[RMDB]
RNA sequence: GGGAACGACUCGAGUAGAGUCGAAAAUGGGAUGUGGGUGAACAGAUGCUCAAGAAUCUAUAUGCUGAGAUCAUCUACACACCAAUAUUGACAGCUGAUGGAACCAUUGUGAAGAAAUUCAAAGGGAAACUCCUAUCGAGUUCGCUCGAUAGGAGUUAAAAGAAACAACAACAACAAC
Reactivity to 2A3 in 0.01 (KOAc 150mM, MgCl2 10mM, bicine 150mM(pH8.5), 24C), signal-to-noise 1, nucleotides 027 to 126: u110g000g000g070a030u020g080u010g000g020g030u000g040a020a000c020a070g030a000u110g070c010u050c110a080a180g030a140a090u190c190u140a170u110a020u300g030c000u010g010a070g020a160u140c010a010u020c010u020a010c020a010c000a000c000c000a020a070u210a150u070u110g020a100c080a030g190c050u120g020a030u070g030g070a080a030c090c020a080u020u060g070u000g040a010a170g070a060a030a010u170u130c010a070a020a060g070g000g100a010
Reactivity to DMS in 0.01 (KOAc 150mM, MgCl2 10mM, bicine 150mM(pH8.5), 24C), signal-to-noise 2, nucleotides 027 to 126: u010g000g000g010a210u000g040u020g000g010g010u010g030a090a100c110a090g000a040u000g010c040u030c170a100a170g000a140a060u000c160u010a160u010a180u010g000c070u000g010a260g010a060u000c010a020u000c000u000a020c060a060c300a080c010c010a050a030u010a050u010u000g000a110c060a060g000c070u000g000a050u000g000g000a090a150c020c070a100u020u000g000u000g010a060a080g000a090a030a120u000u010c060a040a100a060g010g010g040a090
This 177-nucleotide RNA was probed chemically with 2A3 and DMS. Values cover nucleotides 27 to 126. It was measured as part of the RMDB library OK2TST. The reactions ran in a buffer of 150 mM KOAc, 10 mM MgCl2 and 150 mM bicine (pH 8.5), at 24 C.